[RMDB]
RNA sequence: GGGAACGACUCGAGUAGAGUCGAAAAGACGAUUGAGCCGACCGACAAGGCGUUCAAGACGCACGGCUGCCAACCCUGGCAGAACACGGGCAGCGAAGGCGCUGCCCCUGCCGGAGUUCCUGGACCUGAGAAGCAAACUUUUCGAAGUUUGCUUCUCAAAAGAAACAACAACAACAAC
Reactivity to 2A3 in 0.01 (KOAc 150mM, MgCl2 10mM, bicine 150mM(pH8.5), 24C), signal-to-noise 4, nucleotides 027 to 126: g050a020c040g110a140u040u160g030a010g050c030c070g120a240c020c000g040a070c100a130a060g100g020c020g010u070u070c090a070a010g110a050c020g020c010a020c030g050g000c010u040g030c010c020a050a060c010c000c000u010g010g000c010a000g020a100a040c230a050c080g000g000g000c000a000g000c000g090a220a120g230g100c090g010c010u010g000c000c000c000c000u000g000c010c000g000g000a060g000u010u000c010c020u080g000g080a080c000c050u060
Reactivity to DMS in 0.01 (KOAc 150mM, MgCl2 10mM, bicine 150mM(pH8.5), 24C), signal-to-noise 2, nucleotides 027 to 126: g020a090c090g030a140u000u000g010a040g010c060c010g000a060c040c010g010a070c160a140a110g000g010c080g000u040u000c100a080a070g000a020c050g040c010a100c090g000g080c000u050g030c070c000a080a160c140c000c090u010g010g000c000a030g030a070a050c150a110c300g030g000g000c000a040g010c020g000a140a220g000g020c160g010c060u000g000c000c050c000c010u000g000c010c000g010g010a090g000u000u000c010c010u020g040g010a160c190c110u010
The record gives the reactivity of an RNA of 177 nucleotides to 2A3 and DMS. 2A3 adducts were read by reverse transcription with SuperScript II with manganese. The data come from the RNA Mapping Database (RMDB), library RFM100. Reactivities are given for positions 27 through 126. For 2A3, 2,599 sequencing reads were counted.